[RMDB]
RNA sequence: GGGAACGACUCGAGUAGAGUCGAAAAGAUAUGGAUUGUCGGAGUCAACAGCAUACGGGUUCGGAAACGAACUUAUGACAUGACUUUGACAAUCCUAAGUCAAAAGUUUCCCCUUCGGGGGAAACAAGGAAUACGAUUUGUUCGCAAAUCGUAUUCCAAAAGAAACAACAACAACAAC
Reactivity to DMS in 0.01 (KOAc 150mM, MgCl2 10mM, bicine 150mM(pH8.5), 24C), signal-to-noise 2, nucleotides 027 to 126: g020a000u030a200u010g010g010a050u010u000g000u000c030g030g000a000g000u000c020a040a080c260a240g040c040a010u010a010c300g020g000g010u010u000c000g010g000a130a040a160c010g020a000a010c000u000u000a000u000g000a060c050a300u030g020a020c000u000u000u000g000a000c010a010a000u010c000c000u000a010a060g000u000c010a100a150a080a100g000u000u010u000c000c000c000c000u000u000c220g030g030g010g010g000a010a000a000c000a080a070
Reactivity to 2A3 in 0.01 (KOAc 150mM, MgCl2 10mM, bicine 150mM(pH8.5), 24C), signal-to-noise 1, nucleotides 027 to 126: g020a010u030a020u090g030g000a000u030u000g030u000c000g010g030a010g020u020c110a260a100c070a260g020c000a010u110a100c170g160g040g060u010u000c000g040g000a060a060a030c010g020a000a000c000u060u030a010u020g000a030c080a180u300g000a010c000u040u020u010g000a000c010a000a000u000c000c000u000a010a000g000u000c020a000a000a040a260g000u000u000u010c060c000c000c030u010u180c300g070g000g020g000g000a000a000a000c010a000a030